[RMDB]
RNA sequence: GGGAACGACUCGAGUAGAGUCGAAAAGAUAUGGAGGGAGCUGUUCAGGCCAAUCUACAUCGGAAACGAUGUAGGAGCCUGUUCAGCAUCGAUCUCCUAAGUCAAAACGAGCACUUCGGUGCUCGAAGUACCCUUGUAACUUCGGUUACAAGGGUACAAAAGAAACAACAACAACAAC
Reactivity to DMS in 0.01 (KOAc 150mM, MgCl2 10mM, bicine 150mM(pH8.5), 24C), signal-to-noise 2, nucleotides 027 to 126: g030a060u000a300u030g000g000a010g000g000g010a020g010c000u000g000u010u000c000a000g020g020c010c090a140a120u000c000u000a000c000a000u010c010g010g000a160a080a210c000g000a000u010g000u000a010g020g010a080g020c010c000u000g020u000u000c020a000g000c000a090u000c170g000a040u000c000u000c000c000u000a050a100g000u000c010a060a060a130a280c030g000a000g020c000a010c000u000u010c120g010g000u000g010c000u010c000g000a020a070
Reactivity to 2A3 in 0.01 (KOAc 150mM, MgCl2 10mM, bicine 150mM(pH8.5), 24C), signal-to-noise 2, nucleotides 027 to 126: g020a020u130a050u200g000g010a010g000g020g020a030g010c000u000g020u040u010c000a010g010g000c020c020a030a030u040c000u010a000c010a010u000c000g000g050a120a060a010c010g010a000u020g010u010a000g000g000a010g000c000c000u010g000u000u000c010a000g000c010a020u070c000g010a020u000c000u000c000c000u030a230a020g050u040c030a010a000a110a130c030g010a000g000c000a010c020u080u220c300g100g000u010g000c000u000c000g000a010a000
The record gives the reactivity of an RNA of 177 nucleotides to DMS and 2A3. The reactions ran in a buffer of 150 mM KOAc, 10 mM MgCl2 and 150 mM bicine (pH 8.5), at 24 C. 2A3 adducts were read by reverse transcription with SuperScript II with manganese. It was measured as part of the RMDB library TTRDEL. For DMS, 1,861 sequencing reads were counted.